[RMDB]
Conditions: 150 mM KOAc, 10 mM MgCl2 and 150 mM bicine (pH 8.5), 24 C. The record gives the reactivity of an RNA of 207 nucleotides to DMS and 2A3. DMS adducts were read by reverse transcription with MarathonRT. The 2A3 profile rests on 690 reads.
RNA sequence: GGGAACGACUCGAGUAGAGUCGAAAAGGAAUAUAGCGACGGAUCAUUGCCGGCGUCUAUAAACAGAUUAGCAAAGGCAUUGACUUCAGAGGGUAGAGAAAUAGCAAGUGUUAAUAUAGAUGGUAAUCUGUUAGAUAUCGCAUAUCAAGCAGAUAAGCCCUCUGAAGUUGUUCGCAACUUCAGAGGGAAAAGAAACAACAACAACAAC
Reactivity to DMS in 0.01 (KOAc 150mM, MgCl2 10mM, bicine 150mM(pH8.5), 24C), signal-to-noise 1, nucleotides 027 to 156: g050g000a160a230u020a020u050a090g000c000g000a050c050g050g000a020u000c090a020u000u000g000c000c000g000g000c270g000u000c070u000a140u000a050a090a290c000a290g030a140u000u000a050g070c000a050a140a300g000g000c000a010u000u000g020a110c030u000u000c020a090g000a020g000g090g020u010a000g000a030g020a070a110a110u000a110g020c050a050a110g020u000g020u000u000a000a070u000a050u000a180g000a070u000g000g070u000a270a000u000c020u000g050u000u000a300g050a070u000a000u000c300g010c000a300u000a000u000c020a000a300g000c020a020g070a000u000a050a140g070
Reactivity to 2A3 in 0.01 (KOAc 150mM, MgCl2 10mM, bicine 150mM(pH8.5), 24C), signal-to-noise 2, nucleotides 027 to 156: g030g010a160a090u120a020u050a080g000c000g030a020c070g030g010a020u080c010a140u180u300g060c000c010g000g090c010g000u030c020u020a060u100a010a080a040c080a000g110a050u110u110a020g000c020a060a050a070g020g000c030a000u000u070g020a110c050u090u010c090a010g010a050g050g010g000u100a020g010a010g000a100a100a030u110a040g050c020a060a050g060u080g000u170u070a080a010u030a030u030a090g020a050u090g010g000u030a070a020u010c000u000g050u040u010a020g010a010u040a010u110c180g020c060a020u000a010u030c000a040a000g010c010a000g000a010u020a020a020g020